An RNA of 207 nucleotides, treated with 2A3 and DMS and read out base by base.
RNA sequence: GGGAACGACUCGAGUAGAGUCGAAAAAAUACUGAGAAGGCCACUUAAUCCUUCCAUGCCUAUGUUUCUGUGUUGAUAAUUUUGGAGAUGAUAUUUACUUCAUGGCUAAGAAUGUUAUGCAGCAAUGUUGGUUGUGAAAGUGCUUGGCAGAUUAGAACUACUAAUCAGUCUUCGGACUGAUUAGUAGAAAAGAAACAACAACAACAAC
Reactivity to 2A3 in 0.01 (KOAc 150mM, MgCl2 10mM, bicine 150mM(pH8.5), 24C), signal-to-noise 3, nucleotides 027 to 156: a000a000u140a020c040u050g020a060g050a150a030g050g000c060c060a140c020u080u170a090a110u100c010c010u000u000c000c000a020u120g010c000c000u070a070u130g030u000u010u000c030u010g050u010g040u120u030g040a060u040a210a130u030u060u040u060g020g010a050g010a030u090g000a010u030a120u070u130u020a090c010u020u050c040a040u050g050g000c030u030a010a050g060a110a030u110g000u010u010a050u120g020c050a010g010c030a030a080u040g010u070u050g050g030u010u040g010u020g100a040a040a000g030u030g030c020u010u010g020g010c030a020g020a060u060u090a060g000a030a030
Reactivity to DMS in 0.01 (KOAc 150mM, MgCl2 10mM, bicine 150mM(pH8.5), 24C), signal-to-noise 2, nucleotides 027 to 156: a060a040u010a030c080u010g000a140g020a090a080g020g010c050c030a080c110u010u000a090a140u010c030c010u000u000c010c030a080u010g010c020c010u000a090u000g010u000u000u020c020u000g020u000g020u010u000g010a080u020a030a100u000u000u000u000g030g000a060g020a100u000g030a100u000a060u000u000u000a090c090u000u000c030a040u000g020g010c010u000a070a080g000a060a100u010g000u010u000a070u010g010c050a060g030c060a030a040u000g030u000u000g020g020u000u010g030u010g000a050a040a090g010u000g010c020u000u010g020g030c050a090g020a080u000u000a070g030a090a200
For DMS the reverse transcriptase was MarathonRT. The reactions ran in a buffer of 150 mM KOAc, 10 mM MgCl2 and 150 mM bicine (pH 8.5), at 24 C. The DMS profile rests on 5,650 reads.